The record gives the reactivity of an RNA of 177 nucleotides to 2A3 and DMS. High 2A3 reactivity points to a flexible backbone, as in loops and unpaired stretches. For 2A3 the reverse transcriptase was SuperScript II with manganese. It was measured as part of the RMDB libraries RFM100 and RFMREP.

[RMDB]
RNA sequence: GGGAACGACUCGAGUAGAGUCGAAAAAAACAGUUAUUGUUUGCUUGGAGUAUUUUUCCACCGGAUAUCCGUGGAAAUCCUACAGCUAAUACGUAGCCAAUCCUUUAGGGGAUGUAGCAUAUUAGUUGUUAACAGCUAUUUUCGAAUAGCUGUUAACAAAAGAAACAACAACAACAAC
Reactivity to 2A3 in 0.01 (KOAc 150mM, MgCl2 10mM, bicine 150mM(pH8.5), 24C), signal-to-noise 5, nucleotides 027 to 126: a000a000a000c060a030g020u070u040a060u100u080g050u050u040u050g100c050u020u110g010g010a040g020u030a080u020u030u010u000u000c000c010a030c050c060g000g030a140u180a090u300c010c000g000u000g000g010a010a010a010u020c010c020u030a100c040a020g000c000u010a010a000u020a020c140g030u040a010g020c030c010a030a070u010c020c000u070u080u110a150g040g020g010g000a010u010g060u090a030g010c020a010u010a010u060u020a010g030u020u030
Reactivity to DMS in 0.01 (KOAc 150mM, MgCl2 10mM, bicine 150mM(pH8.5), 24C), signal-to-noise 3, nucleotides 027 to 126: a020a000a030c090a060g010u010u000a060u000u010g010u000u030u000g010c130u000u010g000g020a070g020u010a030u000u000u000u000u000c000c000a030c090c130g020g000a300u020a050u030c010c050g050u000g010g000a010a000a010u000c040c070u010a010c100a090g000c000u000a000a010u000a020c100g010u010a140g020c190c100a100a060u000c000c000u010u020u030a100g000g010g000g010a010u000g000u000a200g020c000a090u010a010u000u000a010g000u000u000